RNA sequence: GGGAACGACUCGAGUAGAGUCGAAAAGACGCCUAAUGGCGAAAAUGUAAAAUCAACUACACAGCAGAUAAAUACAACUGCUAAAUCUCGGAACUAGUUGAUCUAGUCCAGCGGUGAGAUCCGCAGACCAUGCACCUCGGUUCGCCGAGGUGCAUGGAAAAGAAACAACAACAACAAC
Reactivity to 2A3 in 0.01 (KOAc 150mM, MgCl2 10mM, bicine 150mM(pH8.5), 24C), signal-to-noise 1, nucleotides 027 to 126: g040a010c000g090c000c000u230a300a170u300g000g000c000g000a100a110a000a000u300g040u080a000a030a160a030u090c000a010a010c000u120a060c070a000c020a000g140c000a000g070a140u120a140a150a040u300a170c060a100a000c000u000g000c000u000a060a000a240u000c080u000c000g000g000a010a010c000u000a060g000u000u000g000a120u000c000u000a040g040u020c040c010a000g010c010g050g010u080g000a150g000a080u060c000c000g000c000a000g080a000